[RMDB]
RNA sequence: GGGAACGACUCGAGUAGAGUCGAAAAACGGCCAGCGCGGCCGCUACUGCGAUCAAGGUGAGGGCAGCACUGAGCCCCCAACAGUCACCGCGGCGUCCACCUGUCGCAAGGAGCAGGUGCGCGAGUAACAUAUGGAACAAUUCGUUGUUCCAUAUGUAAAAGAAACAACAACAACAAC
Reactivity to 2A3 in 0.01 (KOAc 150mM, MgCl2 10mM, bicine 150mM(pH8.5), 24C), signal-to-noise 7, nucleotides 027 to 126: a000c050g120g050c040c010a040g050c040g000c020g090g020c010c000g000c010u020a030c010u020g030c020g080a100u110c150a150a060g020g010u050g060a170g010g050g000c010a030g010c030a040c050u090g070a150g090c030c000c000c010c010a020a030c010a030g080u060c030a020c180c070g010c030g050g000c010g090u030c020c010a000c000c010u020g020u030c010g000c050a040a060g050g010a030g000c070a050g010g030u060g090c000g010c000g000a020g010u020a010
Reactivity to DMS in 0.01 (KOAc 150mM, MgCl2 10mM, bicine 150mM(pH8.5), 24C), signal-to-noise 9, nucleotides 027 to 126: a110c130g010g000c030c030a200g020c040g010c030g000g020c000c000g010c020u000a050c030u000g000c030g000a040u000c150a110a070g010g020u000g010a100g000g000g010c010a050g010c060a110c040u000g000a110g010c030c000c000c010c010a140a230c050a040g000u000c120a110c160c120g010c030g000g010c020g010u010c080c010a020c010c000u000g010u000c020g010c050a050a060g010g000a060g010c000a030g010g000u000g000c040g020c010g010a130g000u010a100